[RMDB]
RNA sequence: GGGAACGACUCGAGUAGAGUCGAAAAACGAUCGUGGUAUACGUACCACGAUCGAAGUCACAACGGCUUCCUGACGUGGCAGAUUGAAUUAUUGGAGCAAGCCUGCGGCUGUACGCAGCCGCAGGCAUUCGAAAACUUUUUUCGAAAAGUUUUCGAAAAAAGAAACAACAACAACAAC
Reactivity to 2A3 in 0.01 (KOAc 150mM, MgCl2 10mM, bicine 150mM(pH8.5), 24C), signal-to-noise 3, nucleotides 027 to 126: a000c000g000a000u000c000g000u010g000g030u010a030u010a070c220g100u010a010c010c000a010c000g000a000u000c000g000a010a000g020u010c000a010c040a090a080c090g090g020c030u190u060c050c020u050g030a050c060g010u010g020g010c020a020g070a220u180u200g130a130a100u210u120a060u130u190g030g020a030g010c020a050a010g000c010c010u000g010c000g020g000c010u020g000u070a030c280g000c080a000g000c000c010g000c010a000g010g000c000a000